[RMDB]
RNA sequence: GGGAACGACUCGAGUAGAGUCGAAAAGGGGUCUUUAGUCGAGUCGAUAGUAGGCUUGGAUUUAUAGGCUGAAGCCUCCACGGCCUAUUGUCAGCCUAUGGGUCGACUAAGACAGCUAAAGACGGAGGCACCCAAAAGCGUUGCUUCGGCAACGCAACUUGUAUGUUGUCUUCGGACAACAUACAAGAAAAGAAACAACAACAACAAC
Reactivity to 2A3 in 0.01 (KOAc 150mM, MgCl2 10mM, bicine 150mM(pH8.5), 24C), signal-to-noise 3, nucleotides 027 to 156: g020g010g040g020u000c000u010u010u010a020g000u050c020g010a000g000u000c000g010a000u010a020g020u000a000g000g010c040u090u250g080g000a030u110u270u120a010u010a000g010g000c000u010g060a090a000g000c000c000u000c000c000a000c000g000g000c000c000u010a010u000u020g030u040c120a060g000c010c000u010a020u050g300g150g040u010c000g000a000c010u000a000a000g000a000c010a000g010c000u000a000a000a000g000a000c000g000g000a000g000g010c010a050c010c000c000a070a080a020a010g010c000g010u000u000g000c000u050u110c260g100g000c010a000a000c000g000c010a000a010
Reactivity to DMS in 0.01 (KOAc 150mM, MgCl2 10mM, bicine 150mM(pH8.5), 24C), signal-to-noise 1, nucleotides 027 to 156: g000g030g010g010u010c000u000u010u000a060g020u000c020g010a040g030u000c040g060a050u000a290g010u030a020g020g030c010u000u040g030g000a000u000u000u000a040u000a010g030g030c000u000g000a060a090g020c000c010u000c000c010a300c100g020g000c000c010u010a030u000u030g030u000c030a080g010c000c010u010a010u000g000g010g010u010c000g000a050c020u010a180a240g010a050c300a080g000c020u010a010a010a050g000a030c000g020g020a030g070g010c020a090c030c010c020a100a130a090a130g000c010g070u000u020g010c010u010u030c230g090g000c030a010a000c010g040c010a000a030
Overview
Conditions: 150 mM KOAc, 10 mM MgCl2 and 150 mM bicine (pH 8.5), 24 C. Chemical mapping of a 207-nucleotide RNA with 2A3 and DMS. 2A3 adducts were read by reverse transcription with SuperScript II with manganese. In probing experiments dimethyl sulfate is read out at A N1 and C N3, which are open when not base-paired. For 2A3, 4,553 sequencing reads were counted. The DMS profile rests on 2,179 reads. For DMS the reverse transcriptase was MarathonRT.